[RMDB]
RNA sequence: GGGAACGACUCGAGUAGAGUCGAAAAGAUAUGGAAUUGACAAGAGGUAGGGCAAUGGAUAUCAGUUAUAUCGGAAACGAUAUAACUGAUAUCUGACCCUACUACCCACCUUGGAGAUUCCUAAGUCCAGUUAAACACACUUCGGUGUGUUUAACUGAAAAGAAACAACAACAACAAC
Reactivity to DMS in 0.01 (KOAc 150mM, MgCl2 10mM, bicine 150mM(pH8.5), 24C), signal-to-noise 3, nucleotides 027 to 126: g020a090u010a300u000g000g040a030a000u000u030g010a300c010a000a010g010a120g000g000u000a020g010g000g030c130a190a070u000g000g000a000u000a000u000c000a000g000u000u000a000u000a020u000c000g000g000a130a160a180c000g000a010u000a000u000a000a000c000u010g000a000u000a000u000c000u000g000a050c000c010c000u000a020c000u000a020c070c090c090a300c130c010u000u010g010g000a300g000a010u000u000c000c000u000a030a100g030u010c050

About this RNA: Structure probing data (DMS) for a 177-nucleotide construct. The data come from the RNA Mapping Database (RMDB), library TTRINS. Values are in units of 0.01, from 0 to 300, in steps of 10. Conditions: 150 mM KOAc, 10 mM MgCl2 and 150 mM bicine (pH 8.5), 24 C. DMS adducts were read by reverse transcription with MarathonRT. The DMS profile rests on 1,542 reads.